[RMDB]
The record gives the reactivity of an RNA of 207 nucleotides to DMS and 2A3. The 2A3 profile rests on 2,564 reads.
RNA sequence: GGGAACGACUCGAGUAGAGUCGAAAAGAGCUUUUCGAAGCUCACGUAGAUAUGGAUCCGAAGAACGAUAUUAAGCAUCUACUCCCCACCUCGGAAACGAGAGGUAGAUGAAAGCAUAUCGGGAGGAUCCUAAGUCAGUCAAGGGAUUCGUCCCUAAGAUGGUUUACCUUUUCGAAGGUAAACCAUCAAAAGAAACAACAACAACAAC
Reactivity to DMS in 0.01 (KOAc 150mM, MgCl2 10mM, bicine 150mM(pH8.5), 24C), signal-to-noise 2, nucleotides 027 to 156: g000a000g040c020u000u000u010u010c260g030a050a000g020c010u020c020a040c130g040u000a130g030a110u010a250u000g010g000a020u010c000c010g000a110a260g040a140a300c000g010a070u010a000u000u010a120a300g010c010a050u000c040u000a020c000u000c090c050c040c040a110c050c030u040c030g000g020a220a170a230c180g040a080g000a300g000g000u000a010g000a010u010g000a100a010a300g000c220a200u000a020u000c030g010g050g030a300g010g000a010u000c020c000u010a000a140g020u000c070a110g010u000c040a130a120g060g000g000a070u000u000c220g000u000c000c000c000u000a060a110
Reactivity to 2A3 in 0.01 (KOAc 150mM, MgCl2 10mM, bicine 150mM(pH8.5), 24C), signal-to-noise 3, nucleotides 027 to 156: g000a000g000c030u070u080u140u220c250g130a020a000g010c010u040c000a060c060g150u160a040g010a070u030a050u060g000g000a000u010c010c010g050a100a060g010a030a020c020g000a010u010a000u060u130a120a030g110c000a000u000c000u000a000c030u150c060c040c010c000a020c010c000u010c000g020g010a090a080a050c010g010a000g000a000g000g020u000a000g000a000u030g020a080a040a070g100c060a000u010a000u000c000g000g000g010a020g000g010a000u000c000c000u010a000a020g010u020c110a010g060u080c160a100a070g020g000g010a030u040u090c150g070u060c070c000c010u010a030a030
Conditions: 150 mM KOAc, 10 mM MgCl2 and 150 mM bicine (pH 8.5), 24 C.
As a SHAPE reagent, 2A3 marks flexible, mostly unpaired nucleotides at the ribose 2'-OH.